[RMDB]
RNA sequence: GGGAACGACUCGAGUAGAGUCGAAAAGAUAUGGACCCGGACUCCGAUAAGAUGCUCGGAAACGAGGCAUCUUUUGACGGAGAAGGGUCCUAAGUCAAACGGGUGUUUUCUUCGGAAAACACCCGAACAUCAAAAUUAUCUUCGGAUAAUUUUGAUGAAAAGAAACAACAACAACAAC
Reactivity to 2A3 in 0.01 (KOAc 150mM, MgCl2 10mM, bicine 150mM(pH8.5), 24C), signal-to-noise 1, nucleotides 027 to 126: g000a020u050a060u130g010g000a010c000c020c010g070g050a120c070u040c000c000g070a090u030a140a000g000a010u010g000c000u010c030g040g010a070a010a010c030g020a040g260g100c000a020u010c000u010u020u020u080g110a030c020g000g000a000g010a010a020g010g000g010u000c000c010u010a020a000g020u020c040a000a090a080c010g000g020g010u000g030u010u040u040u000c050u070u150c220g080g010a030a030a000a000c000a000c000c000c000g010a000a010
Reactivity to DMS in 0.01 (KOAc 150mM, MgCl2 10mM, bicine 150mM(pH8.5), 24C), signal-to-noise 3, nucleotides 027 to 126: g000a030u010a240u010g000g010a000c000c000c000g000g000a300c030u000c000c000g010a110u010a010a010g000a010u010g010c010u010c010g000g010a100a040a130c000g020a010g010g010c000a010u000c000u000u000u000u000g010a180c100g000g000a020g010a160a210g000g000g030u000c000c010u000a000a070g000u000c020a110a160a250c060g000g000g000u000g010u000u000u000u000c010u000u010c260g030g000a000a000a000a000c010a000c010c020c000g010a000a040